[RMDB]
RNA sequence: GGGAACGACUCGAGUAGAGUCGAAAACAGCUCGUUACUGAGAAUAUUCGUGCCGUCAUUAAUCCGCAGAAUGCAAAUCCCCACCGGGGCGGAUGCCACGAUUUUGCGGUUGAACUGUUCGUUUUCUUUACUAAAUAUACUUCGGUAUAUUUAGUAAAAAAGAAACAACAACAACAAC
Reactivity to DMS in 0.01 (KOAc 150mM, MgCl2 10mM, bicine 150mM(pH8.5), 24C), signal-to-noise 4, nucleotides 027 to 126: c100a100g030c030u010c030g000u010u030a050c110u020g010a110g000a130a070u020a060u010u000c020g020u000g010c030c020g030u010c060a120u000u010a080a090u020c020c020g010c050a050g010a020a040u010g000c100a050a120a070u000c010c000c000c050a100c210c060g000g020g000g030c090g010g000a080u020g000c170c050a030c040g010a060u000u000u000u000g000c020g020g010u010u010g010a060a080c090u010g010u000u000c130g020u000u000u010u010c030u010
Reactivity to 2A3 in 0.01 (KOAc 150mM, MgCl2 10mM, bicine 150mM(pH8.5), 24C), signal-to-noise 2, nucleotides 027 to 126: c020a030g020c010u020c040g090u110u100a070c060u080g010a000g050a100a050u130a120u120u060c030g020u030g010c040c000g060u070c020a080u110u180a110a060u040c010c000g020c010a010g020a090a010u100g020c040a020a030a170u070c040c020c000c000a110c080c170g060g010g000g000c020g060g080a040u080g040c030c000a050c050g010a000u000u030u000u070g000c010g000g000u020u030g040a100a070c010u030g010u010u030c030g020u010u020u060u040c010u010